[RMDB]
RNA sequence: GGGAACGACUCGAGUAGAGUCGAAAACUCAACUGACAUACAAGGGGAGGUUUCGGCCAAAUGUUGUAUGCAGAAAGCGUGAGGAAGGUAGCACUUAGACAAUCACGAGUAGCGGUUCGGCAGUAGUAAAGGUCCUGGCGCUUCGGCGCCAGGACAAGUAUAUAUCGUUCUUCGGAACGAUAUAUACAAAAGAAACAACAACAACAAC
Reactivity to 2A3 in 0.01 (KOAc 150mM, MgCl2 10mM, bicine 150mM(pH8.5), 24C), signal-to-noise 2, nucleotides 027 to 156: c020u000c020a020a050c030u030g090a080c000a050u060a010c020a040a030g050g020g010g000a070g010g020u060u060u120c130g190g000c020c020a000a040a070u180g000u040u050g010u000a010u030g000c000a000g080a080a070a000g090c070g030u020g030a040g000g030a020a050g040g000u070a010g070c020a030c080u060u070a040g020a100c030a070a140u180c060a030c110g020a050g040u030a050g050c040g030g050u040u020c040g050g030c050a080g000u130a010g020u040a060a170a060g050g000u020c000c000u000g000g000c040g000c000u030u040c120g080g000c000g000c010c000a000g000g000a000c000a000a000
Reactivity to DMS in 0.01 (KOAc 150mM, MgCl2 10mM, bicine 150mM(pH8.5), 24C), signal-to-noise 1, nucleotides 027 to 156: c020u000c020a050a130c030u010g030a120c010a130u010a060c050a050a050g000g020g000g020a300g000g000u000u000u020c050g000g030c020c010a020a150a170u000g000u000u000g010u000a050u000g000c030a080g000a100a070a120g000c050g040u000g010a040g020g010a040a050g000g000u000a060g000c030a080c060u020u000a100g000a110c040a040a130u000c040a070c080g010a140g010u000a080g010c040g000g010u000u020c030g020g000c010a070g040u000a080g010u000a030a050a160g010g000u000c000c010u010g020g000c040g090c000u010u000c220g080g030c000g030c010c000a010g000g000a010c000a000a060